Chemical mapping of a 207-nucleotide RNA with 2A3 and DMS. Reactivities are rounded to 0.1 and cut off at 0 and 3.
RNA sequence: GGGAACGACUCGAGUAGAGUCGAAAAUUGCCGAUCGGUAUGGAUGCCACCGUGACGGCUCAAUCACACAAGUGCCAACGAUAACGAGGCGGUCGCUAUUGCUGCGUAACUGACGGCCUGACGGUCUAAAACAGAUUCGUGUUCGCACGAAUCUGAAUCUUUACAUCUAGUUCGCUAGAUGUAAAGAAAAAGAAACAACAACAACAAC
Reactivity to 2A3 in 0.01 (KOAc 150mM, MgCl2 10mM, bicine 150mM(pH8.5), 24C), signal-to-noise 9, nucleotides 027 to 156: u130u090g010c010c010g030a080u050c030g010g010u070a050u140g070g070a090u120g090c040c030a020c010c020g030u040g100a100c050g010g000c010u020c060a060a070u080c000a020c030a030c010a120a110g040u040g070c030c010a060a030c050g040a060u060a130a020c040g000a030g080g020c040g040g020u030c010g000c050u050a050u090u180g040c060u040g010c020g040u030a070a020c020u060g030a020c020g040g010c010c010u060g040a030c070g010g020u000c040u100a070a080a030a040c000a000g000a000u000u000c000g000u000g040u040u050c160g030c060a000c000g000a000a000u000c000u000g000a010a020
Reactivity to DMS in 0.01 (KOAc 150mM, MgCl2 10mM, bicine 150mM(pH8.5), 24C), signal-to-noise 4, nucleotides 027 to 156: u010u000g020c000c020g010a110u000c040g020g030u000a070u010g020g020a150u000g020c030c020a090c020c030g030u010g020a260c110g010g010c030u000c060a090a100u000c030a050c060a100c090a080a090g020u000g010c030c020a040a090c030g000a080u000a040a060c030g010a080g020g040c070g010g010u000c000g000c020u000a060u000u010g020c010u000g010c010g030u000a080a090c050u000g010a080c040g000g040c010c000u000g010a120c110g020g000u000c020u000a050a060a090a240c000a020g000a020u000u000c000g030u020g000u000u010c280g020c010a000c010g000a020a010u000c010u000g000a040a060

The 2A3 profile rests on 12,026 reads.